[RMDB]
RNA sequence: GGGAACGACUCGAGUAGAGUCGAAAAGAAAUAACCAACAUCGUACGGCUGACGUGCACGAGCGGUCAGCGUGUAAUGUUGAUACACGACGUAGUCUGACACUGCGAGUCAGUAAAACGUGCGGAAAGGGUAACUUACUCUUCGGAGUAAGUUACCCAAAAGAAACAACAACAACAAC
Reactivity to 2A3 in 0.01 (KOAc 150mM, MgCl2 10mM, bicine 150mM(pH8.5), 24C), signal-to-noise 2, nucleotides 027 to 126: g140a030a070a000u150a060a030c000c050a000a030c000a030u100c050g000u000a000c010g050g080c000u000g010a000c000g160u160g080c060a020c200g100a060g090c090g030g030u000c000a000g050c080g020u040g000u000a060a180u090g050u100u110g060a040u050a080c010a000c050g050a000c020g030u050a000g120u070c000u000g010a010c030a000c100u090g020c030g000a060g000u000c000a040g020u020a020a030a030a030c010g060u070g030c000g050g040a050a020a030
Reactivity to DMS in 0.01 (KOAc 150mM, MgCl2 10mM, bicine 150mM(pH8.5), 24C), signal-to-noise 1, nucleotides 027 to 126: g010a020a110a050u000a230a190c130c010a080a050c150a080u000c000g010u000a000c000g000g040c000u000g030a060c010g020u050g140c030a100c270g000a150g070c210g050g050u020c000a000g020c000g060u000g030u000a000a050u010g000u000u020g000a230u000a000c060a060c010g000a050c240g030u000a220g000u050c030u000g000a000c000a270c160u000g060c040g020a150g050u000c000a010g000u000a050a050a110a050c010g000u000g000c000g000g000a100a070a050
Structure probing data (2A3 and DMS) for a 177-nucleotide construct. 2A3 adducts were read by reverse transcription with SuperScript II with manganese. The RNA was probed in 150 mM KOAc, 10 mM MgCl2 and 150 mM bicine (pH 8.5) at 24 C. It was measured as part of the RMDB library OK1LIB.